The record gives the reactivity of an RNA of 177 nucleotides to 2A3 and DMS. DMS adducts were read by reverse transcription with MarathonRT. The 2A3 profile rests on 12,464 reads. Conditions: 150 mM KOAc, 10 mM MgCl2 and 150 mM bicine (pH 8.5), 24 C. 2A3 adducts were read by reverse transcription with SuperScript II with manganese. It was measured as part of the RMDB library M2PK50. The DMS profile rests on 5,099 reads.
[RMDB]
RNA sequence: GGGAACGACUCGAGUAGAGUCGAAAAGUGACACUGUUCGCAGUGUCACAAAGUGGUGGAUCUAGAACCACAAUAACAAGAUCAAAGAUCUAGUCUAGAUCAAAAGCAUACAGUUCGCUGUAUGCAAUCACUGCUUUAUGUUCGCAUAAAGCAGUGAAAAAGAAACAACAACAACAAC
Reactivity to 2A3 in 0.01 (KOAc 150mM, MgCl2 10mM, bicine 150mM(pH8.5), 24C), signal-to-noise 6, nucleotides 027 to 126: g000u000g000a000c000a000c010u010g020u060u080c170g020c110a000g000u000g000u000c000a000c010a000a010a000g020u020g000g010u010g020g010a010u010c010u010a010g010a010a010c000c010a010c040a010a040u130a040a020c100a030a010g010a030u030c070a250a220a130g030a020u000c030u040a030g090u020c000u010a000g000a010u010c020a010a070a020a030g010c000a000u000a000c010a000g010u020u090c140g070c120u010g000u000a000u000g000c000a000a010
Reactivity to DMS in 0.01 (KOAc 150mM, MgCl2 10mM, bicine 150mM(pH8.5), 24C), signal-to-noise 4, nucleotides 027 to 126: g010u000g000a000c000a010c000u000g000u010u010c170g040c000a010g020u000g010u000c000a000c000a030a060a080g000u010g000g000u010g010g010a010u000c000u010a010g000a020a020c010c010a030c010a100a100u020a080a080c130a090a040g010a000u000c020a150a140a140g000a030u000c020u000a080g000u000c010u000a020g010a010u010c030a110a120a080a130g000c000a000u010a000c000a000g010u000u010c190g030c010u000g010u010a000u000g010c000a060a020